This 170-nucleotide RNA was probed chemically with 2A3 and DMS.

RNA sequence: GGGAACGACUCGAGUAGAGUCGAAAAGUGGGGGCGGCGGCGUCUGGUCUCUUAUUUCUUCCUUCUGAGAAGAGGAGACAGCUUGCCGCUCGCCCCCAGACCCGAGAUGAGCCUCGUGCCGAGGAGAACGCCCCUAUCUUCGGAUAGGGGAAAAGAAACAACAACAACAAC
Reactivity to 2A3 in 0.01 (KOAc 150mM, MgCl2 10mM, bicine 150mM(pH8.5), 24C), signal-to-noise 5, nucleotides 027 to 129: g090u040g000g000g000g000g000c000g010g000c000g020g000c020g030u060c030u040g100g120u050c010u000c000u020u070a250u090u100u040c010u010u020c030c000u150u230c110u170g170a160g000a180a000g000a010g010g000a000g010a000c010a000g010c040u050u140g010c000c000g000c000u000c010g010c000c000c000c000c000a000g000a000c040c010c000g000a030g000a020u140g010a030g000c000c010u050c050g070u180g160c080c060g010a010g020g000a030g010a050a020c040g040
Reactivity to DMS in 0.01 (KOAc 150mM, MgCl2 10mM, bicine 150mM(pH8.5), 24C), signal-to-noise 4, nucleotides 027 to 129: g030u020g010g000g010g020g000c020g010g020c000g000g050c000g000u030c030u010g020g020u020c020u010c000u000u000a160u060u040u010c000u010u020c060c090u010u000c260u070g000a140g000a020a000g000a050g030g000a020g010a050c000a000g000c130u020u020g000c020c010g020c010u020c020g000c000c000c000c000c000a010g000a040c100c010c010g030a010g010a080u000g020a070g030c000c000u000c000g020u010g000c070c040g000a020g000g000a070g020a100a040c160g040
The RNA was probed in 150 mM KOAc, 10 mM MgCl2 and 150 mM bicine (pH 8.5) at 24 C. For 2A3, 14,083 sequencing reads were counted.